Description:
Source: RMDB library RFM100, as collected in RNAgym. Chemical mapping of a 177-nucleotide RNA with 2A3. The 2A3 profile rests on 692 reads.

RNA sequence: GGGAACGACUCGAGUAGAGUCGAAAAGAAAGAAAGAAAGGGCGCCUCCUGCUCUGCUGUGCCGCCAGGGCCUCCCCUAGCGCGCCUUCUGGAGAGGCUUUGUGCGGAUACGGGGCUGGAGGCCUAAGCCGUUGAUGCAGUUCGCUGCAUCAACGGCAAAAGAAACAACAACAACAAC
Reactivity to 2A3 in 0.01 (KOAc 150mM, MgCl2 10mM, bicine 150mM(pH8.5), 24C), signal-to-noise 1, nucleotides 027 to 126: g090a010a020a000g120a080a070a010g180a040a060a040g020g150g000c040g010c000c000u000c030c000u030g000c000u000c010u040g070c100u040g030u140g180c000c000g000c000c000a000g020g030g000c020c000u010c000c010c000c000u010a040g050c100g000c010g060c120c000u220u130c010u040g010g010a070g000a010g000g000c000u000u000u000g190u170g010c020g000g020a000u000a000c010g000g010g000g000c000u020g010g000a000g000g010c000c010u000a000a000